[RMDB]
RNA sequence: GGGAACGACUCGAGUAGAGUCGAAAAGAUAUGGACGAAGGCCGAUAAGCUGGUGUCGGAAACGACAUGCAGCUUUUGACGGCUUAGUCCUAAGUCAAAGAGGCGAAGAGUUCGCUCUUCGCCUCAAGGUAAUAAAGCAGUUCGCUGCUUUAUUACCAAAAGAAACAACAACAACAAC
Reactivity to 2A3 in 0.01 (KOAc 150mM, MgCl2 10mM, bicine 150mM(pH8.5), 24C), signal-to-noise 3, nucleotides 027 to 126: g010a000u030a010u060g000g000a000c000g020a050a030g030g000c030c010g090a210u120a300a020g000c000u000g010g000u000g010u000c000g000g000a040a020a000c000g030a000c020a040u280g220c020a170g000c000u020u000u030u030g030a010c000g000g000c000u010u010a000g010u010c000c000u000a000a000g010u000c020a000a030a240g010a010g000g000c000g000a000a000g000a010g040u110u170c250g080c110u000c000u000u000c000g000c000c000u000c000a000a000
Reactivity to DMS in 0.01 (KOAc 150mM, MgCl2 10mM, bicine 150mM(pH8.5), 24C), signal-to-noise 6, nucleotides 027 to 126: g010a030u000a190u010g000g010a010c000g010a230a220g000g000c000c000g010a130u010a040a020g010c000u000g000g000u000g000u000c010g000g000a040a050a090c000g010a010c010a000u000g020c010a010g010c000u000u000u010u000g010a170c040g000g000c000u000u000a200g010u000c000c000u000a020a080g010u000c020a070a120a120g000a010g010g010c000g010a010a000g000a020g010u000u020c260g010c000u000c000u000u000c000g000c000c000u000c000a010a010
Description
Chemical mapping of a 177-nucleotide RNA with 2A3 and DMS. Conditions: 150 mM KOAc, 10 mM MgCl2 and 150 mM bicine (pH 8.5), 24 C.